[RMDB]
Record summary:
An RNA of 207 nucleotides, treated with 2A3 and DMS and read out base by base. For DMS the reverse transcriptase was MarathonRT. The RNA was probed in 150 mM KOAc, 10 mM MgCl2 and 150 mM bicine (pH 8.5) at 24 C. The DMS profile rests on 2,089 reads. For 2A3 the reverse transcriptase was SuperScript II with manganese. Values cover nucleotides 27 to 156.
RNA sequence: GGGAACGACUCGAGUAGAGUCGAAAACCUACCCAAGGUGAAAGAUCCUUCUCUCGCAAUGUGUAACUCAUGAUUCUCAUGACCCCUGGUUGGAGAGAUCCGGACUAGGAGCCAGGGGGCCUCUGAUAAAGCCAGACGCACUUCGGUGCGUCUGGAACAUGAUGUUCUGGUUCGCCAGAACAUCAUGAAAAGAAACAACAACAACAAC
Reactivity to 2A3 in 0.01 (KOAc 150mM, MgCl2 10mM, bicine 150mM(pH8.5), 24C), signal-to-noise 2, nucleotides 027 to 156: c000c000u010a040c000c020c030a060a010g100g010u090g040a080a060a020g040a070u090c000c010u040u050c030u000c010u000c020g110c140a070a140u130g050u050g030u200a090a060c040u030c070a040u030g040a120u300u050c090u050c100a030u090g030a140c010c000c000c020u020g020g030u040u070g050g010a050g000a010g010a070u050c090c070g060g050a070c040u090a040g030g050a010g000c010c010a000g000g010g000g000g000c000c010u040c030u030g030a090u130a190a080a020g050c000c000a000g000a000c010g000c000a000c000u030u130c230g090g010u000g000c000g000u000c000u000g000g000a000a000
Reactivity to DMS in 0.01 (KOAc 150mM, MgCl2 10mM, bicine 150mM(pH8.5), 24C), signal-to-noise 1, nucleotides 027 to 156: c010c030u000a170c030c010c010a100a090g030g030u000g010a100a100a110g020a100u000c030c040u010u000c010u000c000u010c030g000c110a120a070u000g050u040g020u000a050a130c070u010c030a090u010g030a200u010u010c050u000c020a040u010g010a100c000c000c000c000u000g040g010u000u000g020g010a060g010a210g000a130u000c040c030g030g030a200c070u000a090g000g030a190g000c020c010a010g000g010g040g020g020c080c010u000c030u020g010a120u000a050a070a130g020c000c000a040g020a010c000g030c010a030c010u010u000c300g070g010u000g020c030g000u000c000u000g030g000a030a040